[RMDB]
RNA sequence: GGGAACGACUCGAGUAGAGUCGAAAAACAUCUCACCACACUUUAUUAUGUGAGCAAGCAUAUAUAAACCAUGUGUGCAACCGUACCUCUGACAUGCGUGUUUUUUCUUGUCUGCGGGUUAGUUGAACUGUGUGUGUUGUUUCGACAACACACACAGAAAAGAAACAACAACAACAAC
Reactivity to 2A3 in 0.01 (KOAc 150mM, MgCl2 10mM, bicine 150mM(pH8.5), 24C), signal-to-noise 1, nucleotides 027 to 126: a000c010a070u020c000u000c040a030c000c000a010c010a020c000u050u060u050a050u090u040a040u130g080u040g070a130g110c110a060a040g020c040a030u130a000u000a000u040a090a020a080c080c070a120u100g000u040g000u030g000c000a040a020c010c000g120u070a010c010c000u000c010u000g020a000c000a040u070g000c110g080u060g210u120u040u010u000u000u040c030u010u000g010u000c010u000g050c080g000g000g060u030u080a010g000u040u070g010a120a010
Reactivity to DMS in 0.01 (KOAc 150mM, MgCl2 10mM, bicine 150mM(pH8.5), 24C), signal-to-noise 2, nucleotides 027 to 126: a140c200a110u020c010u000c020a240c250c040a040c030a040c060u010u000u000a030u020u000a020u000g030u000g000a150g040c280a160a150g020c010a000u000a000u000a050u000a010a040a070c220c160a060u000g000u000g020u010g000c040a030a040c010c050g000u000a080c020c000u000c010u020g000a010c020a000u000g000c270g020u000g020u000u000u000u000u000u000c000u000u000g010u000c000u000g000c120g000g020g010u000u000a050g010u000u000g000a120a220